RNA sequence: GGGAACGACUCGAGUAGAGUCGAAAAGAAAAAGUCGUCGAGAGACGAAAGUCUCGAGUCCGGAGAAUAUCGAGUAGUGGAUACGAUCCGGAAAGUAUCGACUACAAGAUAUCGAGACGACGAAAAAGGGUUAAUAUUCCUUCGGGAAUAUUAACCCAAAAGAAACAACAACAACAAC
Reactivity to 2A3 in 0.01 (KOAc 150mM, MgCl2 10mM, bicine 150mM(pH8.5), 24C), signal-to-noise 2, nucleotides 027 to 126: g020a020a070a000a000a000g010u000c000g000u000c030g000a020g020a000g010a110c030g020a050a020a000g000u010c000u000c030g020a010g040u000c010c010g060g130a060g020a150a040u000a000u020c020g000a030g050u000a020g000u040g100g000a000u000a000c010g000a070u050c070c150g120g090a100a000a000g000u000a000u020c010g110a010c000u000a000c000a010a010g030a020u010a000u020c000g000a000g000a030c000g000a000c000g040a090a000a000a000a000
Reactivity to DMS in 0.01 (KOAc 150mM, MgCl2 10mM, bicine 150mM(pH8.5), 24C), signal-to-noise 2, nucleotides 027 to 126: g040a060a030a100a040a040g030u000c020g020u000c000g030a240g000a020g000a000c000g000a080a040a200g000u000c000u010c000g000a140g000u030c030c000g010g030a090g000a110a030u000a000u000c000g000a300g000u010a050g010u000g010g000a000u000a000c000g010a180u000c090c040g000g010a020a010a220g030u000a000u000c000g010a000c000u000a000c000a010a300g000a020u010a000u000c060g000a230g000a000c000g020a000c050g030a020a030a000a140a200
Notes:
Chemical mapping of a 177-nucleotide RNA with 2A3 and DMS. The reactions ran in a buffer of 150 mM KOAc, 10 mM MgCl2 and 150 mM bicine (pH 8.5), at 24 C. For 2A3 the reverse transcriptase was SuperScript II with manganese. The DMS profile rests on 2,211 reads.